[RMDB]
RNA sequence: GGGAACGACUCGAGUAGAGUCGAAAAGAUAUGGAUCUAACGAGGGAGCGUGCGGUCGGAAACGACCGGCACGCGAGGAUCUCGAGAUCCUAAGUCAAAGUGAAGCUGUCUUCGGACAGCUUCACAACAACACCAUAAAGUUCGCUUUAUGGUGUUGAAAAGAAACAACAACAACAAC
Reactivity to DMS in 0.01 (KOAc 150mM, MgCl2 10mM, bicine 150mM(pH8.5), 24C), signal-to-noise 7, nucleotides 027 to 126: g000a010u000a020u020g000g010a010u000c000u010a160a220c050g000a020g000g000g000a010g030c010g060u000g010c000g000g010u000c010g010g000a010a010a020c000g010a010c000c000g000g020c000a010c000g030c000g000a040g010g010a030u000c000u000c000g000a030g010a010u000c000c000u000a000a090g000u000c000a120a130a140g010u000g010a020a010g010c000u010g000u000c000u000u010c280g020g010a010c000a000g010c000u010u000c000a000c010a020a180
Reactivity to 2A3 in 0.01 (KOAc 150mM, MgCl2 10mM, bicine 150mM(pH8.5), 24C), signal-to-noise 5, nucleotides 027 to 126: g010a000u020a010u050g000g000a000u000c010u080a300a240c040g000a010g000g020g010a030g000c010g000u020g020c010g020g000u010c000g000g010a030a010a000c010g010a000c010c030g050g060c010a000c000g010c010g000a020g000g000a000u000c000u000c000g010a010g000a010u000c010c000u000a010a000g010u000c050a130a070a040g000u010g000a010a000g010c000u010g020u000c040u110u300c300g000g000a000c000a000g000c010u000u000c000a000c010a000a000

An RNA of 177 nucleotides, treated with DMS and 2A3 and read out base by base. For DMS, 23,839 sequencing reads were counted. DMS adducts were read by reverse transcription with MarathonRT. The RNA was probed in 150 mM KOAc, 10 mM MgCl2 and 150 mM bicine (pH 8.5) at 24 C. 2A3 adducts were read by reverse transcription with SuperScript II with manganese.